The record gives the reactivity of an RNA of 177 nucleotides to DMS and 2A3.
RNA sequence: GGGAACGACUCGAGUAGAGUCGAAAACAGAGGGAUCUAUGUAGAAUACCUUAUCCUCGAAACGGCAGAAGAGGAGCUCAUGUUCAAAAGAAUGUGUCGUGAAUGCAGUCAAGCAGACAGGCAGCUUUAGCUGCCUGAUAUUCGUAUCAGGCAGCUAAAAAGAAACAACAACAACAAC
Reactivity to DMS in 0.01 (KOAc 150mM, MgCl2 10mM, bicine 150mM(pH8.5), 24C), signal-to-noise 8, nucleotides 027 to 126: c190a140g010a060g000g000g000a140u010c020u000a120u020g020u030a060g010a070a060u020a210c030c020u020u020a060u010c010c000u000c060g010a070a080a070c090g000g010c050a060g000a080a140g000a060g010g010a070g010c060u000c060a070u010g010u010u010c080a070a070a080a100g010a060a060u020g010u000g000u000c020g010u000g010a060a070u010g000c020a060g010u010c120a060a090g010c080a070g000a090c060a060g000g020c070a050g000c110u000u000
Reactivity to 2A3 in 0.01 (KOAc 150mM, MgCl2 10mM, bicine 150mM(pH8.5), 24C), signal-to-noise 9, nucleotides 027 to 126: c050a010g050a020g020g030g010a010u030c030u060a140u290g210u270a060g030a100a060u230a250c000c020u030u050a050u040c010c000u020c010g010a100a100a040c040g060g000c030a020g020a140a010g010a060g020g020a010g000c010u020c060a050u080g040u130u060c060a080a090a030a030g080a050a070u110g030u010g010u070c030g040u030g050a050a030u060g010c020a020g080u100c050a070a080g030c010a010g020a040c010a010g040g050c020a020g010c010u010u010
For DMS the reverse transcriptase was MarathonRT. Source: RMDB libraries RFM100 and RFMREP, as collected in RNAgym. For 2A3 the reverse transcriptase was SuperScript II with manganese. The RNA was probed in 150 mM KOAc, 10 mM MgCl2 and 150 mM bicine (pH 8.5) at 24 C. Reactivities are given for positions 27 through 126. Values are in units of 0.01, from 0 to 300, in steps of 10.